[RMDB]
RNA sequence: GGGAACGACUCGAGUAGAGUCGAAAAUCGUGAGAUGUGGUGCCUCACGCGCUCGAGGCGUCCGUGGUCAGAGAGACCACUGACGCAAAAACUCGAGCGCAAAUAAAGCGCAUUACAUGUAGAAUAAAUCAUUAGCGCGAUUCGUCGCGCUAAUGAUAAAAGAAACAACAACAACAAC
Reactivity to DMS in 0.01 (KOAc 150mM, MgCl2 10mM, bicine 150mM(pH8.5), 24C), signal-to-noise 1, nucleotides 027 to 126: u010c070g000u020g000a060g000a090u050g000u020g000g000u000g050c000c000u000c070a120c120g000c000g000c000u000c000g020a040g000g010c000g010u000c010c000g030u000g000g060u010c000a200g020a140g050a300g000a020c000c000a000c000u000g000a000c000g010c050a010a000a100a000a300c200u050c110g000a020g020c000g000c000a010a020a150u020a000a030a020g000c180g000c000a000u020u000a050c000a040u000g000u030a060g020a190a090u000a100a120
An RNA of 177 nucleotides, treated with DMS and read out base by base. It was measured as part of the RMDB library OK1LIB. High DMS reactivity at an A or C suggests that its Watson-Crick edge is free. The RNA was probed in 150 mM KOAc, 10 mM MgCl2 and 150 mM bicine (pH 8.5) at 24 C. DMS adducts were read by reverse transcription with MarathonRT.